Chemical mapping of a 177-nucleotide RNA with 2A3. For 2A3, 1,037 sequencing reads were counted. High 2A3 reactivity points to a flexible backbone, as in loops and unpaired stretches. Conditions: 150 mM KOAc, 10 mM MgCl2 and 150 mM bicine (pH 8.5), 24 C. Values cover nucleotides 27 to 126. 2A3 adducts were read by reverse transcription with SuperScript II with manganese.
[RMDB]
RNA sequence: GGGAACGACUCGAGUAGAGUCGAAAACAAAAACAUACGCGAACGUCAAGGUUAAGAAGAACCGCAAGACGACGCGAAGAAAUGCUCACAAACGAAAGUGAGCAAACAAUUGCGGUUCAAAACAAAACGCACUAGUAGACUUCGGUCUACUAGUGCGAAAAGAAACAACAACAACAAC
Reactivity to 2A3 in 0.01 (KOAc 150mM, MgCl2 10mM, bicine 150mM(pH8.5), 24C), signal-to-noise 2, nucleotides 027 to 126: c010a000a120a000a000a000c020a030u240a010c000g010c030g030a270a060c000g000u040c050a110a280g170g100u170u300a040a080g080a060a010g000a010a010c010c000g000c010a010a040g000a000c000g020a020c000g050c000g010a000a040g060a010a050a000u020g020c000u000c000a000c010a010a250a160c210g250a150a050a000g000u000g000a000g000c000a010a010a010c000a000a140u000u000g030c020g030g000u000u070c000a000a050a000a000c060a000a120a000a000